[RMDB]
RNA sequence: GGGAACGACUCGAGUAGAGUCGAAAAUUCUUUAUAAGCUGAAGGAUGCUCAGGAGCGGCUGCUGAACGUGGUAAGUUAUGUGUGUCAGGAGCAUCGGCAAGAUUUUGACAUGCAGGACAGCAUGGUCUCAUGCCCCUGCUUUCGCCUGCACAUCCCGAUCAGGGUACCAUUCGUGGUACCCUGAUCAAAAGAAACAACAACAACAAC
Reactivity to 2A3 in 0.01 (KOAc 150mM, MgCl2 10mM, bicine 150mM(pH8.5), 24C), signal-to-noise 1, nucleotides 027 to 156: u050u000c020u020u070u000a150u110a300a020g010c000u040g100a080a010g100g000a010u020g000c010u080c150a050g080g010a070g020c050g100g020c010u020g040c000u060g010a140a020c050g000u110g000g020u090a100a120g020u200u110a120u090g090u050g070u060g030u030c020a020g040g040a000g000c010a000u040c020g010g000c080a150a020g010a060u100u080u060u160g030a070c060a060u050g030c020a000g060g060a010c000a000g010c000a000u020g070g100u120c040u020c060a060u290g010c050c000c050c060u010g000c000u010u000u050c080g000c000c000u000g000c010a020c000a090u000c000c000c040